[RMDB]
RNA sequence: GGGAACGACUCGAGUAGAGUCGAAAAUUCGACGCCGAAACGGGCCGCCAGGGCCUGAUCGAGGCCGCGACCCGCAAGCCCGAUCUCGCGAUCGUCGAUCUCGGCCUGCCGGACGGCGACGGCCUCACCAUUAAAAUCGUUUCGACGAUUUUAAUGGAAAAGAAACAACAACAACAAC
Reactivity to DMS in 0.01 (KOAc 150mM, MgCl2 10mM, bicine 150mM(pH8.5), 24C), signal-to-noise 8, nucleotides 027 to 126: u000u010c040g010a110c090g020c040c020g000a040a070a130c060g010g000g010c020c030g020c260c170a090g000g010g010c000c020u000g010a020u000c070g010a070g000g010c030c010g010c030g000a070c080c010c040g010c070a080a070g000c060c030c030g000a060u000c050u000c050g000c060g000a080u000c070g010u010c030g010a020u000c040u000c130g010g020c020c030u000g010c100c050g010g010a090c060g000g000c010g010a210c020g000g000c010c030u000c080a190
Reactivity to 2A3 in 0.01 (KOAc 150mM, MgCl2 10mM, bicine 150mM(pH8.5), 24C), signal-to-noise 6, nucleotides 027 to 126: u080u020c020g030a030c040g010c030c010g060a130a140a040c030g010g040g000c040c050g110c110c090a160g050g020g040c000c000u010g010a020u080c060g010a010g000g000c000c000g000c010g010a040c010c000c000g020c060a040a010g020c010c050c020g020a040u030c020u010c030g010c040g110a210u140c050g190u060c010g040a040u000c040u030c040g000g000c000c000u050g050c050c030g040g030a070c020g010g030c020g030a080c010g020g010c000c010u020c010a060
The record gives the reactivity of an RNA of 177 nucleotides to DMS and 2A3. The reactions ran in a buffer of 150 mM KOAc, 10 mM MgCl2 and 150 mM bicine (pH 8.5), at 24 C. For 2A3 the reverse transcriptase was SuperScript II with manganese. Reactivities are given for positions 27 through 126. The 2A3 profile rests on 18,027 reads. For DMS the reverse transcriptase was MarathonRT.